RNA sequence: GGGAACGACUCGAGUAGAGUCGAAAACUUAGUGUCACCUACCUUAAACAUGCUUAGAACGCUUACAUUAGCCUACGGUUGGGCAAAAUCAUCUAACACAAAGCCUAUUUUAUGAUAAAGUAUUGAAUAUCUCAUGUAAUGUACUGAGUACUGUACAAGUGAUAAUUAGCUUCGGCUAAUUAUCACUAAAAGAAACAACAACAACAAC
Reactivity to 2A3 in 0.01 (KOAc 150mM, MgCl2 10mM, bicine 150mM(pH8.5), 24C), signal-to-noise 3, nucleotides 027 to 156: c030u160u110a020g050u050g110u130c010a060c010c040u060a070c010c030u070u160a080a070a010c030a050u050g020c000u040u050a010g010a090a020c040g020c000u020u040a020c020a110u070u100a020g020c030c030u080a020c040g100g030u060u060g010g000g030c020a050a030a060a010u050c040a000u000c000u090a100a040c040a010c050a170a060a060g030c010c010u070a150u070u110u060u020a120u110g020a020u040a150a100a020g040u040a070u130u100g010a060a020u080a100u110c040u020c040a040u050g020u090a070a070u070g020u030a010c010u040g020a010g070u040a050c060u040g010u070a010c020a100
Reactivity to DMS in 0.01 (KOAc 150mM, MgCl2 10mM, bicine 150mM(pH8.5), 24C), signal-to-noise 1, nucleotides 027 to 156: c050u000u020a090g050u010g030u000c020a030c010c020u000a060c040c020u000u010a050a080a110c020a060u000g020c020u010u000a080g000a070a120c080g020c040u060u000a060c040a150u000u000a120g010c030c030u000a050c070g010g000u000u010g010g000g040c030a070a090a120a100u010c040a080u010c070u000a040a080c050a050c070a070a010a160g040c020c090u000a110u000u010u000u000a080u010g010a100u010a060a050a110g000u000a030u030u000g010a040a150u000a100u010c030u000c050a080u010g010u000a030a150u010g030u000a060c080u000g020a050g030u000a070c040u000g030u000a050c070a140